[RMDB]
RNA sequence: GGGAACGACUCGAGUAGAGUCGAAAAGCCAUGAUGCUCGGGUUGGCGACGUACACGACGGUGUCGUCCACCGAGGUCAUGAAGAUGCCAAUGGCGAUCGCCCAUAGCGUGUCGCGAUGGGUUUGGAGCUCGUACCCGAGUUCGCUCGGGUACGAGCAAAAGAAACAACAACAACAAC
Reactivity to 2A3 in 0.01 (KOAc 150mM, MgCl2 10mM, bicine 150mM(pH8.5), 24C), signal-to-noise 2, nucleotides 027 to 126: g070c060c050a050u000g000a040u120g240c050u000c030g210g020g110u080u050g040g050c020g000a000c000g050u200a090c110a000c130g300a030c220g050g010u050g000u010c000g010u000c000c000a000c000c000g000a000g040g000u050c000a010u000g000a000a050g020a030u110g070c000c000a000a040u130g070g000c000g080a060u030c040g000c000c000c110a030u120a070g010c050g020u300g170u260c020g000c030g030a000u010g000g000g000u000u010u090g000g000a020
Chemical mapping of a 177-nucleotide RNA with 2A3. Source: RMDB library OK1LIB, as collected in RNAgym.